RNA sequence: GGGAACGACUCGAGUAGAGUCGAAAAGUAGAGGAAAGAUCUAUAUAACACAACAUAUGUAAUUGUGUUAUCUGAUAACAAUUAUCGUGAUUGUGUAAUCUCCUCAUAUUGUUUAUUCAAGUAGAAAGAUCAUAUCUGACUUCGGUCAGAUGUGAUCAAAAGAAACAACAACAACAAC
Reactivity to 2A3 in 0.01 (KOAc 150mM, MgCl2 10mM, bicine 150mM(pH8.5), 24C), signal-to-noise 4, nucleotides 027 to 126: g060u060a010g010a020g010g010a060a010a030g030a010u000c020u020a080u000a010u020a160a000c000a000c010a010a000c000a010u060a020u100g020u050a000a010u030u010g000u010g030u060u040a060u010c070u130g040a070u000a070a000c000a010a000u000u020a030u060c090g010u020g050a300u000u000g010u000g000u010a060a020u000c020u010c030c000u030c010a000u060a010u070u020g030u010u060u070a120u030u110c050a080a020g080u030a040g090a050a110a000
Reactivity to DMS in 0.01 (KOAc 150mM, MgCl2 10mM, bicine 150mM(pH8.5), 24C), signal-to-noise 9, nucleotides 027 to 126: g020u020a070g000a000g000g010a050a060a070g010a000u010c070u030a100u030a010u000a010a000c000a000c000a000a000c000a010u000a010u000g000u000a000a010u000u000g000u000g010u010u010a030u010c210u030g000a060u020a070a020c000a010a010u000u000a050u020c300g020u020g000a050u000u000g010u000g000u010a120a050u010c010u000c000c000u000c010a030u010a030u000u000g000u000u010u000a090u040u020c070a060a110g020u030a110g000a100a080a100